[RMDB]
RNA sequence: GGGAACGACUCGAGUAGAGUCGAAAAGGACACAGAUCAAAUCACCUGGCAUGAUCUGGGACAGCGACAUCUUGGGGACAGAGAUGGGCCAGGAAGGAGGGGGCAGAGAGCUAGAGAUGGAGACCCAUCUAGCAACCAAUUUCGAUUGGUUGCUAGAAAAAGAAACAACAACAACAAC
Reactivity to DMS in 0.01 (KOAc 150mM, MgCl2 10mM, bicine 150mM(pH8.5), 24C), signal-to-noise 2, nucleotides 027 to 126: g010g010a180c090a110c030a050g000a020u000c040a050a110a150u000c070a140c060c040u010g000g020c110a250u010g000a020u000c010u000g030g010g000a070c100a090g010c050g000a110c080a040u010c030u000u030g040g010g000g020a090c090a050g000a050g010a060u000g000g070g010c050c030a020g000g010a120a070g000g000a050g000g010g000g010g010c050a000g010a060g010a090g000c050u010a070g010a080g010a050u000g000g000a110g000a130c010c010c020a090
Reactivity to 2A3 in 0.01 (KOAc 150mM, MgCl2 10mM, bicine 150mM(pH8.5), 24C), signal-to-noise 1, nucleotides 027 to 126: g070g020a010c010a000c000a130g000a070u040c040a010a110a080u100c050a070c000c040u040g060g000c020a010u090g010a020u070c000u000g010g010g020a050c060a090g070c040g080a000c000a080u050c040u070u140g050g010g000g010a010c050a040g100a010g030a060u090g080g000g000c030c040a010g000g060a050a000g010g050a050g030g030g010g030g000c020a020g060a040g030a000g060c020u050a040g010a000g000a080u060g040g030a040g000a020c030c000c000a000
Conditions: 150 mM KOAc, 10 mM MgCl2 and 150 mM bicine (pH 8.5), 24 C. The record gives the reactivity of an RNA of 177 nucleotides to DMS and 2A3. Values are in units of 0.01, from 0 to 300, in steps of 10. The 2A3 profile rests on 1,172 reads. Values cover nucleotides 27 to 126.